[RMDB]
RNA sequence: GGGAACGACUCGAGUAGAGUCGAAAAGAUAUGGAUCAGGACAUGAAGCGCUAUCGGAAACGAUAGCUUUCAACAGCCUGGAUCCUAAGUCAAAAGGUCAUACAUGCCUUCGGGCAUGUAUGACCAAGUAACUUAUAUUCUUCGGAAUAUAAGUUACAAAAGAAACAACAACAACAAC
Reactivity to 2A3 in 0.01 (KOAc 150mM, MgCl2 10mM, bicine 150mM(pH8.5), 24C), signal-to-noise 2, nucleotides 027 to 126: g020a020u090a040u120g000g000a010u000c010a000g000g020a050c070a220u100g000a020a010g080c060g020c220u000a020u000c010g050g000a050a060a000c000g010a010u000a010g000c000u000u010u000c020a020a020c000a010g050c010c010u040g110g050a010u000c000c000u020a110a010g050u050c030a040a020a060a180g040g000u000c000a000u000a000c000a010u000g010c000c010u090u160c300g050g010g000c020a000u000g000u050a000u000g000a000c000c000a010a000
Reactivity to DMS in 0.01 (KOAc 150mM, MgCl2 10mM, bicine 150mM(pH8.5), 24C), signal-to-noise 4, nucleotides 027 to 126: g010a050u000a300u010g000g000a020u000c000a030g000g000a030c070a170u000g000a030a000g000c200g000c000u000a010u000c000g010g000a120a050a180c000g010a020u000a000g000c000u000u000u000c000a020a060c270a160g010c000c000u000g020g010a020u000c000c000u000a030a100g010u010c040a080a070a130a120g000g000u000c010a010u000a010c010a000u010g000c000c000u000u010c260g020g000g000c000a000u000g010u010a010u000g000a000c020c010a010a030